[RMDB]
RNA sequence: GGGAACGACUCGAGUAGAGUCGAAAAGCGUACUACUUAAAGAUGAAACAGAGCGAGAGAUGGUGGGUGGAUGAUCCCAAAUAGGAUCAUCGCCACCAUGGAAUGCUCUGUAACCUUUAAGUAUCGCAAAAGAAGAUCGGGUUCGCCCGAUCUUCAAGCUAGAAAUCGUCUUCGGACGAUUUCUAGCAAAAGAAACAACAACAACAAC
Reactivity to 2A3 in 0.01 (KOAc 150mM, MgCl2 10mM, bicine 150mM(pH8.5), 24C), signal-to-noise 2, nucleotides 027 to 156: g020c030g090u080a090c050u000a000c000u000u000a000a000a000g030a050u150g110a150a210a030c000a000g020a000g000c010g030a070g000a030g000a290u020g020g000u050g080g100g130u150g060g010a000u000g000a000u070c000c050c050a090a300a120u280a100g000g010a000u000c000a000u010c010g010c010c000a010c010c000a000u000g010g060a080a080u120g000c020u000c000u030g000u000a000a000c000c000u020u000u020a000a000g020u030a030u240c000g000c000a030a080a000a050g000a000a010g000a000u000c010g000g000g000u000u070c130g070c050c000c000g030a000u020c000u030u030c000a000a000